Source information: The record gives the reactivity of an RNA of 207 nucleotides to 2A3. Conditions: 150 mM KOAc, 10 mM MgCl2 and 150 mM bicine (pH 8.5), 24 C. Source: RMDB library RNAMAK, as collected in RNAgym. Values are in units of 0.01, from 0 to 300, in steps of 10.
RNA sequence: GGGAACGACUCGAGUAGAGUCGAAAAAAAACGCUGGGCACUGAAACGACAUCGAUCUUGCAACGAAUUCGCUGAAGCGCGCACGGCGAACUAUUGCAAGGGAGUCGGAGUACUGUGCCUGUGCUGAAGCGCGCACGGCAACCGAAAGGUGCGAAAACCUAUGUCUCGUGUUCGCACGAGACAUAGGAAAAGAAACAACAACAACAAC
Reactivity to 2A3 in 0.01 (KOAc 150mM, MgCl2 10mM, bicine 150mM(pH8.5), 24C), signal-to-noise 3, nucleotides 027 to 156: a000a000a000a000c010g000c000u000g020g010g000c000a000c000u030g030a020a010a010c030g020a000c010a020u300c160g000a010u000c000u010u000g030c000a010a010c020g060a300a300u030u000c010g000c000u030g020a120a030g020c000g000c000g000c000a000c000g020g000c000g000a000a000c090u000a000u000u010g010c000a000a000g010g000g000a020g000u010c000g000g000a000g010u010a000c030u010g000u000g000c000c000u000g010u000g000c000u010g020a110a040g000c010g000c010g010c020a020c010g000g000c000a000a000c010c000g020a070a030a010g020g000u020g010c000g050a060a030a010a000